[RMDB]
RNA sequence: GGGAACGACUCGAGUAGAGUCGAAAAGCGUGGCGGCGAUGACCAAGGCCUUCGGGAUCGGGUUUCUCGCCCGUCCCCGCUCCACCCAAGCCGAAGCGGCGCGUGAGGCGCCGGCCAGCAUGCGCGCCAAGGUAGACCUGUUCGCAGGUCUACCUUGAAAAGAAACAACAACAACAAC
Reactivity to DMS in 0.01 (KOAc 150mM, MgCl2 10mM, bicine 150mM(pH8.5), 24C), signal-to-noise 4, nucleotides 027 to 126: g010c030g000u000g010g010c040g000g020c030g010a010u010g000a080c020c020a020a070g030g020c010c010u010u050c100g020g000g000a050u000c140g010g000g000u000u000u020c220u010c020g000c040c010c080g020u020c000c000c000c030g020c020u000c030c020a090c020c010c010a110a080g000c090c080g030a150a120g020c070g000g000c010g000c030g000u030g020a180g030g000c000g000c080c110g000g010c030c020a080g000c040a060u010g000c030g000c040g010c030
Reactivity to 2A3 in 0.01 (KOAc 150mM, MgCl2 10mM, bicine 150mM(pH8.5), 24C), signal-to-noise 3, nucleotides 027 to 126: g010c010g000u010g010g010c010g010g000c010g030a030u100g020a020c020c030a060a100g300g020c020c000u040u090c160g040g000g020a120u120c100g030g000g020u040u080u060c150u050c040g020c010c030c010g070u240c000c000c010c010g000c010u020c020c020a070c020c000c000a060a030g050c030c040g090a080a010g020c050g090g000c010g010c020g020u080g110a070g080g000c000g020c010c000g020g010c000c000a040g020c020a030u130g020c020g000c000g040c020

This 177-nucleotide RNA was probed chemically with DMS and 2A3.
The RNA was probed in 150 mM KOAc, 10 mM MgCl2 and 150 mM bicine (pH 8.5) at 24 C.
2A3 adducts were read by reverse transcription with SuperScript II with manganese.